The data come from the RNA Mapping Database (RMDB), library TTRDES. The record gives the reactivity of an RNA of 177 nucleotides to 2A3 and DMS. For 2A3 the reverse transcriptase was SuperScript II with manganese. The 2A3 profile rests on 3,317 reads. The RNA was probed in 150 mM KOAc, 10 mM MgCl2 and 150 mM bicine (pH 8.5) at 24 C.

RNA sequence: GGGAACGACUCGAGUAGAGUCGAAAAGCAAUUGAUAUGGAAAGCUUGGACCUGUGUGUCGGUAAACAGAGCUCGGAAACGAGCUCUGUGCCAGACAUUGCAGCUAGCUUUCCUAAGUCUACAAAAACAAUUUCUAAUAGUUCGCUAUUAGAAAUUGAAAAGAAACAACAACAACAAC
Reactivity to 2A3 in 0.01 (KOAc 150mM, MgCl2 10mM, bicine 150mM(pH8.5), 24C), signal-to-noise 2, nucleotides 027 to 126: g040c010a080a160u200u130g000a030u030a060u190g000g020a010a000a010g000c040u150u180g070g050a190c050c010u020g020u000g000u010g000u020c000g000g020u090a190a230a080c000a000g010a010g000c010u000c030g030g070a040a080a070c000g010a000g010c000u020c000u000g000u020g000c030c000a010g010a000c000a010u110u300g000c000a000g000c000u010a000g000c000u000u000u000c000c000u010a010a000g000u000c020u100a120c140a050a140a020a040a030
Reactivity to DMS in 0.01 (KOAc 150mM, MgCl2 10mM, bicine 150mM(pH8.5), 24C), signal-to-noise 5, nucleotides 027 to 126: g020c150a130a110u010u010g000a040u000a300u010g000g010a010a010a020g000c010u000u020g070g000a110c300c030u010g020u000g010u000g010u010c000g010g010u000a090a130a110c010a000g010a020g000c010u000c000g000g000a070a080a210c000g030a010g010c000u000c010u000g020u000g000c020c000a200g020a010c000a000u000u020g060c000a010g020c020u000a020g010c000u000u000u000c000c010u000a010a080g010u000c030u000a110c170a060a070a090a100a150